Chemical mapping of a 177-nucleotide RNA with DMS. It was measured as part of the RMDB libraries RFM100 and RFMREP. Conditions: 150 mM KOAc, 10 mM MgCl2 and 150 mM bicine (pH 8.5), 24 C.

RNA sequence: GGGAACGACUCGAGUAGAGUCGAAAAUCUGCUGUGAAUCUGUCGGGACCACCCGAUAAGCCUGAAUACUCCCUGGUGACCGAUAGCGGACUAGUACCGUGAGGGAAAGGUGAAAAGUACCCCGGGAUGUCAACACUACUUUCGAGUAGUGUUGACAAAAAGAAACAACAACAACAAC
Reactivity to DMS in 0.01 (KOAc 150mM, MgCl2 10mM, bicine 150mM(pH8.5), 24C), signal-to-noise 3, nucleotides 027 to 126: u020c060u000g000c030u010g000u010g030a030a080u010c100u000g010u000c040g000g000g010a230c210c300a120c050c000c020g010a060u030a070a110g010c120c010u040g000a070a090u020a060c140u000c000c010c010u020g000g050u020g010a140c020c040g000a070u050a130g000c040g000g000a130c090u000a070g000u010a060c010c010g000u010g020a150g000g000g000a050a110a030g000g010u000g000a050a050a080a070g030u040a090c070c040c010c040g000g040g000a170